An RNA of 207 nucleotides, treated with DMS and 2A3 and read out base by base. 2A3 adducts were read by reverse transcription with SuperScript II with manganese. The DMS profile rests on 1,865 reads. The 2A3 profile rests on 1,546 reads.
RNA sequence: GGGAACGACUCGAGUAGAGUCGAAAAGGCAAUAACGAACUAAUUCUAAGCAAGUAAUGGAGAAAUGCCAGGGUCACUAUCUAGCCAUAAUAGUGCUUGACAGUAUGAUAGUAACUGAACAAUAAGUAAAAGCGCUGGUACUUCGGUACCAGCGCAAGCACAAAAUAAUCUUCGGAUUAUUUUGUGCAAAAGAAACAACAACAACAAC
Reactivity to DMS in 0.01 (KOAc 150mM, MgCl2 10mM, bicine 150mM(pH8.5), 24C), signal-to-noise 1, nucleotides 027 to 156: g000g000c030a080a100u030a070a130c110g000a080a180c030u020a030a140u020u030c080u000a060a080g040c020a060a130g000u010a040a070u020g010g000a120g000a080a080a080u000g000c020c040a080g010g000g040u000c020a010c010u000a020u000c030u000a150g030c060c030a080u000a070a170u010a140g000u020g030c080u010u020g030a070c000a080g030u000a100u000g000a060u000a040g080u020a010a010c080u020g010a090a050c090a040a030u010a060a150g010u000a050a040a180a210g050c000g000c030u000g030g030u000a040c000u000u010c270g040g120u010a000c000c020a000g010c010g000c000a000a030
Reactivity to 2A3 in 0.01 (KOAc 150mM, MgCl2 10mM, bicine 150mM(pH8.5), 24C), signal-to-noise 3, nucleotides 027 to 156: g040g000c030a050a090u140a140a040c090g020a050a020c040u060a100a080u170u070c050u140a060a040g030c020a040a040g030u100a040a120u100g060g000a070g030a080a080a020u050g010c010c010a010g010g000g020u040c030a010c020u030a040u050c030u050a030g040c000c000a020u030a150a050u050a100g080u060g040c030u010u010g040a020c000a020g090u130a050u090g040a020u030a060g050u050a100a030c020u020g060a000a020c030a070a100u180a140a030g080u100a040a060a040a080g010c000g000c000u000g040g000u010a010c000u030u030c160g020g000u000a000c010c000a000g050c010g020c000a000a000